[RMDB]
RNA sequence: GGGAACGACUCGAGUAGAGUCGAAAACCAUAACAAGUCUAACUGGCUCAGAAGAGCUAGCUGUGCCGCAAUAAAACCACAUGGAGGAGAUAUCCCACUUGAUAAUCUAUUUAUCUGGGCUCGAUUUCAGAGUGAGCGUUUUCGAACGCUCACUCUGAAAAGAAACAACAACAACAAC
Reactivity to 2A3 in 0.01 (KOAc 150mM, MgCl2 10mM, bicine 150mM(pH8.5), 24C), signal-to-noise 1, nucleotides 027 to 126: c000c000a000u000a000a190c200a150a000g150u000c000u120a040a000c000u070g000g170c000u000c000a070g100a280a070g020a300g000c000u000a000g000c000u000g070u180g180c000c000g150c000a000a000u000a170a100a070a160c090c000a000c030a290u090g070g000a000g020g020a070g000a060u130a000u000c000c040c000a000c040u000u060g000a000u000a160a060u050c250u210a300u060u080u000a030u040c000u040g000g000g000c030u030c030g000a000u010u010u010
Source: RMDB library RFM100, as collected in RNAgym. This 177-nucleotide RNA was probed chemically with 2A3. The RNA was probed in 150 mM KOAc, 10 mM MgCl2 and 150 mM bicine (pH 8.5) at 24 C. For 2A3, 275 sequencing reads were counted. For 2A3 the reverse transcriptase was SuperScript II with manganese.